[RMDB]
RNA sequence: GGGAACGACUCGAGUAGAGUCGAAAAACUUACUGAUAGGAUUUGCAAAUGUGUCAAGUGCAUCAAGGAGAAGAUAGAGGAAAAACCUAUUAGGCAAACAAGCCAAAAGACAAGGAUACCCUUUCUCAUUUCGGGUUAGUUUCGACUAACCCGAAAUAAAAGAAACAACAACAACAAC
Reactivity to 2A3 in 0.01 (KOAc 150mM, MgCl2 10mM, bicine 150mM(pH8.5), 24C), signal-to-noise 2, nucleotides 027 to 126: a000c020u010u050a040c020u010g050a100u050a080g030g000a040u110u000u000g040c010a010a040a160u150g020u060g110u300c050a090a120g040u040g090c000a030u000c030a080a140g060g050a080g000a130a030g020a120u050a030g020a110g070g100a000a200a000a000a000c040c000u040a090u010u160a070g000g000c020a020a300a000c030a240a150g030c010c010a000a180a000a070g070a020c070a000a040g000g000a050u160a200c000c000c000u040u000u000c000u000c000
Reactivity to DMS in 0.01 (KOAc 150mM, MgCl2 10mM, bicine 150mM(pH8.5), 24C), signal-to-noise 2, nucleotides 027 to 126: a060c080u000u010a050c020u020g030a080u020a090g000g000a040u040u010u010g010c070a080a220a020u030g030u020g000u060c020a080a050g040u000g010c010a080u000c060a030a040g000g060a100g000a070a050g000a070u030a110g000a030g000g000a040a130a050a060a090c000c030u000a050u010u020a160g020g000c080a030a050a200c250a060a090g000c010c000a040a100a130a000g000a200c090a060a010g000g000a080u000a040c020c000c010u040u010u000c000u020c070